[RMDB]
The record gives the reactivity of an RNA of 177 nucleotides to 2A3 and DMS. The 2A3 profile rests on 2,222 reads. DMS adducts were read by reverse transcription with MarathonRT. Values cover nucleotides 27 to 126. Values are in units of 0.01, from 0 to 300, in steps of 10. The RNA was probed in 150 mM KOAc, 10 mM MgCl2 and 150 mM bicine (pH 8.5) at 24 C. It was measured as part of the RMDB library TTRDES. The DMS profile rests on 1,198 reads.
RNA sequence: GGGAACGACUCGAGUAGAGUCGAAAAGAUAUGGAUAUUGUGGUUGGCGAAGAACUUAGUCGGAAACGACUAAGGGAGCCACCACUGAUAUCCUAAGUCAAAACAACCGCAGUUCGCUGCGGUUGAAGAAUUUGUACAGGUUCGCCUGUACAAAUUCAAAAGAAACAACAACAACAAC
Reactivity to 2A3 in 0.01 (KOAc 150mM, MgCl2 10mM, bicine 150mM(pH8.5), 24C), signal-to-noise 1, nucleotides 027 to 126: g000a020u050a020u140g000g000a000u030a000u040u050g000u020g040g040u110u300g090g000c030g250a300a010g000a020a040c010u010u000a000g000u020c030g000g000a010a060a050c000g000a000c000u000a010a000g000g000g000a000g000c000c020a000c010c010a010c000u000g000a020u010a000u000c000c000u010a080a010g040u000c000a010a050a130a260c000a030a030c020c020g000c010a000g050u080u220c300g090c220u010g000c000g000g040u010u000g010a000a010
Reactivity to DMS in 0.01 (KOAc 150mM, MgCl2 10mM, bicine 150mM(pH8.5), 24C), signal-to-noise 2, nucleotides 027 to 126: g020a060u010a300u000g020g000a000u000a000u000u000g050u000g020g020u020u030g060g010c000g000a140a240g000a130a190c020u000u000a000g000u000c000g000g000a120a160a200c010g030a020c000u000a000a000g000g000g020a080g000c000c010a010c030c000a010c010u000g040a030u000a000u000c000c000u010a020a170g020u010c030a100a130a130a220c000a000a030c040c010g020c030a010g010u010u020c290g000c000u000g040c000g000g020u010u000g000a010a150